Notes: Conditions: 150 mM KOAc, 10 mM MgCl2 and 150 mM bicine (pH 8.5), 24 C. Structure probing data (2A3 and DMS) for a 207-nucleotide construct. DMS adducts were read by reverse transcription with MarathonRT. In probing experiments dimethyl sulfate is read out at A N1 and C N3, which are open when not base-paired.
[RMDB]
RNA sequence: GGGAACGACUCGAGUAGAGUCGAAAAUCGGACGGCGGCCAUGAGUCGCAACGCAAAGCCGCGGCAAGUGGAGUUCGCGAGAAGAGACUAGGCUUUGGUUUCUUCAAGUGAAGCGGUCACCAAUCAGAAUAGCUUGCGCAGUUCGCUGCGCAAGCAACUUAACAUUUGGGUUCGCCCAAAUGUUAAGAAAAGAAACAACAACAACAAC
Reactivity to 2A3 in 0.01 (KOAc 150mM, MgCl2 10mM, bicine 150mM(pH8.5), 24C), signal-to-noise 3, nucleotides 027 to 156: u090c040g040g040a010c050g070g020c010g060g010c000c000a070u090g010a030g040u020c000g000c030a050a040c050g020c090a150a150a060g070c070c090g000c030g010g010c040a080a040g000u030g030g030a090g020u060u040c010g000c010g010a030g000a020a000g010a000g010a010c010u020a060g140g210c080u140u190u190g000g000u030u010u000c000u000u010c000a020a040g010u020g010a030a020g030c000g050g000u020c030a020c050c000a020a090u170c030a020g100a200a080u110a050g000c000u000u010g000c000g000c010a000g010u050u140c210g040c120u000g010c000g000c000a000a000g000c010a010a000
Reactivity to DMS in 0.01 (KOAc 150mM, MgCl2 10mM, bicine 150mM(pH8.5), 24C), signal-to-noise 1, nucleotides 027 to 156: u010c050g000g020a060c010g030g020c000g040g000c030c000a080u010g020a300g030u000c010g060c000a040a020c040g000c050a130a220a200g030c010c030g070c020g040g000c030a070a300g050u000g040g020a290g000u000u010c010g000c010g000a300g000a060a010g000a090g010a040c010u000a070g030g000c250u000u000u030g000g040u010u000u000c010u000u000c030a030a300g060u000g010a090a100g010c080g000g000u010c010a070c040c000a030a130u000c090a120g020a090a160u000a180g000c000u010u010g010c000g000c000a010g030u010u000c270g030c000u030g000c000g020c000a030a000g010c000a000a000